Chemical mapping of a 177-nucleotide RNA with DMS and 2A3. The reactions ran in a buffer of 150 mM KOAc, 10 mM MgCl2 and 150 mM bicine (pH 8.5), at 24 C. The 2A3 profile rests on 1,024 reads. It was measured as part of the RMDB library OK2TST. 2A3 adducts were read by reverse transcription with SuperScript II with manganese.
[RMDB]
RNA sequence: GGGAACGACUCGAGUAGAGUCGAAAAUACAUGUGCAGAACGUGCAGGUUUGUUACAUAGAUAUACACGUGUCAUGGUGGUUUGCUGCACCCAUCAAACCGUCAUCUACAUUAGGUAUUUCUCCUAAUCCUUCAUUCCGUUUCGACGGAAUGAAGGAAAAAGAAACAACAACAACAAC
Reactivity to DMS in 0.01 (KOAc 150mM, MgCl2 10mM, bicine 150mM(pH8.5), 24C), signal-to-noise 3, nucleotides 027 to 126: u000a080c020a070u000g020u000g020c020a050g000a070a100c090g070u000g000c020a080g010g000u000u000u010g000u010u010a050c120a070u000a050g010a030u010a080u000a060c030a070c090g020u000g010u000c300a030u000g010g000u000g010g020u000u000u000g000c080u010g000c140a050c180c200c050a040u000c070a040a050a010c020c010g030u000c030a040u010c060u010a020c060a100u000u000a050g000g000u010a030u010u010u000c140u000c030c040u000a040a070
Reactivity to 2A3 in 0.01 (KOAc 150mM, MgCl2 10mM, bicine 150mM(pH8.5), 24C), signal-to-noise 1, nucleotides 027 to 126: u140a000c050a010u010g010u020g000c050a040g080a300a060c040g000u070g120c060a010g000g080u020u070u100g060u050u190a050c030a010u130a050g030a010u100a010u020a090c070a000c030g020u020g020u000c050a030u010g030g000u000g010g020u000u000u070g000c050u020g000c060a110c100c080c000a000u040c000a030a050a050c040c010g030u000c000a030u000c020u060a050c000a080u060u050a050g050g000u010a040u090u100u000c030u000c010c000u020a060a050